[RMDB]
RNA sequence: GGGAACGACUCGAGUAGAGUCGAAAAACUGCCAUACGUGGCAGAAACACGCCUUACCAGGACUAAACAGCGUGUAUAAAAAACAGUCCUUCAUACCUGAUCUGGAGGGUAGAUCAGGAAUACUAAAAAAAUCGGGUGAAGUUCGCUUCACCCGAAACUAAAAGUAGAACUUCGGUUCUACUUUUAGAAAAGAAACAACAACAACAAC
Reactivity to 2A3 in 0.01 (KOAc 150mM, MgCl2 10mM, bicine 150mM(pH8.5), 24C), signal-to-noise 2, nucleotides 027 to 156: a000c010u010g010c010c000a040u060a080c200g050u030g000g000c000a000g010a000a010a000c000a000c000g000c000c010u020u090a030c020c040a020g000g000a000c010u050a130a040a050c020a020g010c040g100u000g000u010a130u110a300a000a010a010a000a000c040a000g010u000c030c000u040u100c050a070u060a120c000c000u000g000a000u000c000u010g070g040a090g060g050g030u060a000g000a010u010c020a000g030g010a000a010u100a040c070u170a040a010a060a030a010a010a140u030c010g010g010g000u000g000a000a010g010u050u120c170g030c100u000u000c000a000c000c000c010g000a010a000a000
Reactivity to DMS in 0.01 (KOAc 150mM, MgCl2 10mM, bicine 150mM(pH8.5), 24C), signal-to-noise 1, nucleotides 027 to 156: a050c000u000g040c000c000a080u000a060c190g060u010g010g000c010a020g010a200a150a050c000a000c000g020c000c000u000u000a030c040c020a000g040g010a030c000u030a120a030a090c050a030g020c010g030u000g030u010a010u010a010a000a020a090a030a030c080a050g030u020c000c000u000u020c090a210u010a100c000c000u010g000a020u000c010u010g010g000a110g010g010g030u010a030g000a020u010c000a010g030g010a050a040u000a110c080u010a000a000a110a160a050a100a160u010c010g010g000g020u000g000a040a040g000u000u000c300g040c020u000u010c000a030c000c000c010g030a010a010a020